This 207-nucleotide RNA was probed chemically with 2A3. The RNA was probed in 150 mM KOAc, 10 mM MgCl2 and 150 mM bicine (pH 8.5) at 24 C. The data come from the RNA Mapping Database (RMDB), library OK3TST. For 2A3 the reverse transcriptase was SuperScript II with manganese.

RNA sequence: GGGAACGACUCGAGUAGAGUCGAAAAUACAUAUUUGCAGUUUAGAUUGUAGGCACACUGCUGAGACACGUUCACAGGUGGAAGUUAAACACUUAAAACGCAGCUGCUAAAUUAAACAAAUAAAGCUACUGCUAUAAUUCAUUUAGCAACCGUCACGCAGUUGUACUGCCUUCGGGCAGUACAACUGAAAAGAAACAACAACAACAAC
Reactivity to 2A3 in 0.01 (KOAc 150mM, MgCl2 10mM, bicine 150mM(pH8.5), 24C), signal-to-noise 1, nucleotides 027 to 156: u050a010c010a000u150a010u080u180u130g040c040a010g030u030u030u060a060g040a040u070u170g030u090a060g020g020c050a010c000a000c040u020g000c010u040g020a000g010a020c070a040c160g050u040u020c020a050c020a010g090g070u060g000g110a020a050g030u020u040a110a190a010c040a030c040u010u100a130a020a020a020c050g000c010a010g040c020u010g040c000u000a040a080a120u070u080a040a110a040c040a040a090a050u190a240a060a000g000c060u070a030c100u110g000c000u010a010u070a120a060u170u080c040a010u050u050u000a010g000c000a020a050c040c000g020u030c010a000c200g080